[RMDB]
RNA sequence: GGGAACGACUCGAGUAGAGUCGAAAAGAGGAGUAAUGGUUGAAGAGAAGAUCAUCAAAGAGAUCAAGUUUGGCAUUCUAUCGCCAGACGAGAUCAGAAAAAUGUCGGUAGUUGCCAUAACGACAGACACACUCAGGAAGUUCGCUUCCUGAGUGUGAAAAGAAACAACAACAACAAC
Reactivity to 2A3 in 0.01 (KOAc 150mM, MgCl2 10mM, bicine 150mM(pH8.5), 24C), signal-to-noise 2, nucleotides 027 to 126: g040a040g030g030a050g020u090a130a050u080g040g000u070u050g030a080a030g050a010g030a130a010g010a050u030c020a010u010c030a100a080a050g090a000g000a010u010c010a020a010g000u000u010u010g000g000c010a020u300u000c110u240a220u200c150g000c010c010a010g010a000c000g030a010g000a020u030c010a020g090a010a070a020a000a000u040g020u020c020g030g020u060a040g040u030u060g110c050c000a040u030a060a010c020g010a010c010a020g010a040
Reactivity to DMS in 0.01 (KOAc 150mM, MgCl2 10mM, bicine 150mM(pH8.5), 24C), signal-to-noise 3, nucleotides 027 to 126: g010a040g010g000a030g000u000a070a080u010g010g020u000u000g020a080a090g020a150g000a060a090g020a040u000c020a040u010c090a070a060a130g010a150g010a030u000c000a050a300g000u000u020u000g040g000c010a100u010u010c150u020a090u010c190g010c010c030a000g010a000c010g000a300g000a000u000c060a070g010a040a080a060a040a060u000g010u010c030g000g000u000a060g020u010u010g030c060c060a050u000a020a050c010g000a030c130a000g000a210
Source: RMDB library OK2TST, as collected in RNAgym. The record gives the reactivity of an RNA of 177 nucleotides to 2A3 and DMS. Reactivities are rounded to 0.1 and cut off at 0 and 3. 2A3 adducts were read by reverse transcription with SuperScript II with manganese. For DMS the reverse transcriptase was MarathonRT.